This 177-nucleotide RNA was probed chemically with 2A3 and DMS. Reactivities are given for positions 27 through 126. The reactions ran in a buffer of 150 mM KOAc, 10 mM MgCl2 and 150 mM bicine (pH 8.5), at 24 C. For 2A3, 2,073 sequencing reads were counted. For DMS, 3,732 sequencing reads were counted. For DMS the reverse transcriptase was MarathonRT. For 2A3 the reverse transcriptase was SuperScript II with manganese.
[RMDB]
RNA sequence: GGGAACGACUCGAGUAGAGUCGAAAAAGUACAUGGCGGAAAAUGGGGCAAUGGCGUUACUCACAUCGUUGGCACCAUGUGCGAAGGAUGCACAAACGGCCGUAAAUACCUGAAGGUAACGAAACACGCUUCGAGCGUGUUUCGACACGCUCGAAGCAAAAGAAACAACAACAACAAC
Reactivity to 2A3 in 0.01 (KOAc 150mM, MgCl2 10mM, bicine 150mM(pH8.5), 24C), signal-to-noise 2, nucleotides 027 to 126: a050g020u030a020c030a080u070g030g000c040g060g080a010a010a020a070u120g030g000g110g000c050a010a030u080g020g000c020g070u040u030a040c000u010c080a000c010a140u050c070g110u060u040g040g040c000a020c020c000a030u130g000u000g040c020g030a070a000g050g000a080u150g020c080a000c060a030a040a020c010g040g030c000c030g010u020a060a000a060u100a070c010c010u020g080a050a010g020g020u020a020a080c010g040a040a100a000c110a060c130
Reactivity to DMS in 0.01 (KOAc 150mM, MgCl2 10mM, bicine 150mM(pH8.5), 24C), signal-to-noise 3, nucleotides 027 to 126: a100g010u030a070c050a080u000g000g100c030g010g010a000a040a080a080u030g010g010g040g000c060a110a070u040g000g030c130g000u000u010a090c110u000c140a020c070a040u000c040g000u020u000g010g000c030a040c010c080a100u020g000u000g020c010g020a160a120g010g040a100u030g000c060a020c100a000a040a100c210g000g000c000c040g050u020a020a030a160u000a080c010c020u000g000a150a060g010g010u020a050a060c030g000a080a120a010c200a060c070